Overview:
This 177-nucleotide RNA was probed chemically with 2A3 and DMS. For 2A3 the reverse transcriptase was SuperScript II with manganese. The reactions ran in a buffer of 150 mM KOAc, 10 mM MgCl2 and 150 mM bicine (pH 8.5), at 24 C. For DMS the reverse transcriptase was MarathonRT.

[RMDB]
RNA sequence: GGGAACGACUCGAGUAGAGUCGAAAAGAAUACUUUUAGUACAAGCGAGUACACGCAGUAUACUGCCACGUGUGUGAGAAUACUUUUAGUACAAGCGAGUACACGCAGUAUACUGCCACUUGUGUGAGUUCUACCAGACAUUCGUGUCUGGUAGAACAAAAGAAACAACAACAACAAC
Reactivity to 2A3 in 0.01 (KOAc 150mM, MgCl2 10mM, bicine 150mM(pH8.5), 24C), signal-to-noise 5, nucleotides 027 to 126: g050a040a040u230a180c070u130u140u100u150a080g070u050a070c050a070a040g030c020g060a020g070u130a030c070a010c080g000c000a000g000u000a000u000a000c000u010g060c080c050a170c120g000u000g000u020g000u030g030a090g030a080a030u070a060c000u070u160u150u210a080g020u040a010c050a060a040g060c010g060a010g010u020a010c010a010c010g000c000a000g000u000a000u000a010c000u000g010c010c000a010c000u020u020g000u000g020u030g110a060
Reactivity to DMS in 0.01 (KOAc 150mM, MgCl2 10mM, bicine 150mM(pH8.5), 24C), signal-to-noise 3, nucleotides 027 to 126: g000a130a190u020a000c050u000u010u040u000a070g020u040a020c100a090a100g020c020g000a120g000u010a070c110a120c280g020c040a000g010u000a000u000a000c010u010g000c000c300a100c210g020u000g000u000g000u010g010a160g000a080a040u010a000c030u000u000u020u080a080g030u030a020c300a040a140g000c020g000a300g000u010a010c030a010c010g000c030a000g010u000a000u010a000c000u020g020c000c090a000c020u000u000g000u000g030u020g010a100